[RMDB]
RNA sequence: GGGAACGACUCGAGUAGAGUCGAAAAUACCUUUGCAGGGGUUUGGAAAGGGGAUCCCCCUUUCACGUUUUGAGGAGGGUGCUCAGGAUGCAGACAAAGCUCCAAAGGCAUCCGUCGAAGGGGUCGAGUUCUCAUAUGAGUUCGCUCAUAUGAGAACAAAAGAAACAACAACAACAAC
Reactivity to DMS in 0.01 (KOAc 150mM, MgCl2 10mM, bicine 150mM(pH8.5), 24C), signal-to-noise 2, nucleotides 027 to 126: u020a130c010c020u000u000u040g030c110a150g010g000g010g000u010u000u030g010g000a030a010a040g010g000g000g020a170u000c150c040c000c000c000u000u000u000c030a070c120g010u000u000u000u000g010a120g030g020a260g010g000g030u000g040c000u000c000a300g000g000a010u010g030c010a050g000a130c300a110a120a090g000c000u010c000c010a000a160a140g000g000c010a010u000c010c020g010u000c060g000a060a060g010g000g000g000u000c050g000a190
Reactivity to 2A3 in 0.01 (KOAc 150mM, MgCl2 10mM, bicine 150mM(pH8.5), 24C), signal-to-noise 1, nucleotides 027 to 126: u010a020c000c000u050u030u120g050c060a020g050g040g020g050u080u230u220g030g120a010a030a010g040g020g060g010a080u060c000c020c000c000c000u030u030u050c010a010c050g030u030u070u130u200g070a070g020g050a060g040g000g000u000g000c020u040c190a000g000g000a030u190g010c010a020g120a180c090a050a110a000g020c010u010c020c030a040a000a000g030g010c000a010u020c010c010g000u000c000g000a020a000g000g000g000g050u070c050g010a040
This 177-nucleotide RNA was probed chemically with DMS and 2A3.
The reactions ran in a buffer of 150 mM KOAc, 10 mM MgCl2 and 150 mM bicine (pH 8.5), at 24 C.
For DMS, 1,280 sequencing reads were counted.
DMS adducts were read by reverse transcription with MarathonRT.
The 2A3 profile rests on 948 reads.